[RMDB]
RNA sequence: GGGAACGACUCGAGUAGAGUCGAAAAGCUGUGCUUAUGGCUGUCGAUGACUGCGCUGCGGCCCCCUCGCAGGCUGACACAGGCUCAGCCGUGCCAACUGCCGAGCCAGCCACAGACGCUGCAACCGAAGCCAUACCCUAUUCGUAGGGUAUGGCUUAAAAGAAACAACAACAACAAC
Reactivity to 2A3 in 0.01 (KOAc 150mM, MgCl2 10mM, bicine 150mM(pH8.5), 24C), signal-to-noise 2, nucleotides 027 to 126: g080c100u070g050u130g140c030u210u070a070u200g050g000c070u070g090u070c040g050a090u030g030a050c010u010g040c040g050c110u190g160c040g020g070c000c000c020c000c020u010c060g040c040a000g000g000c020u000g020a000c020a020c080a280g110g020c040u020c010a000g000c000c000g040u010g000c000c010a030a010c050u060g000c010c010g000a000g000c000c000a010g000c010c000a000c000a020g050a020c030g000c030u030g000c010a000a070c000c000g040
Reactivity to DMS in 0.01 (KOAc 150mM, MgCl2 10mM, bicine 150mM(pH8.5), 24C), signal-to-noise 4, nucleotides 027 to 126: g000c040u010g040u000g020c050u000u010a110u000g010g010c000u010g020u000c010g000a180u000g010a040c030u000g000c180g020c050u000g000c020g020g020c000c020c020c020c020u020c150g020c020a150g000g010c020u010g010a050c060a210c150a180g020g020c110u000c050a030g020c000c010g020u020g000c050c220a040a030c120u000g000c020c010g010a050g000c030c030a010g010c010c010a030c140a260g020a050c000g020c050u000g000c130a080a150c030c010g000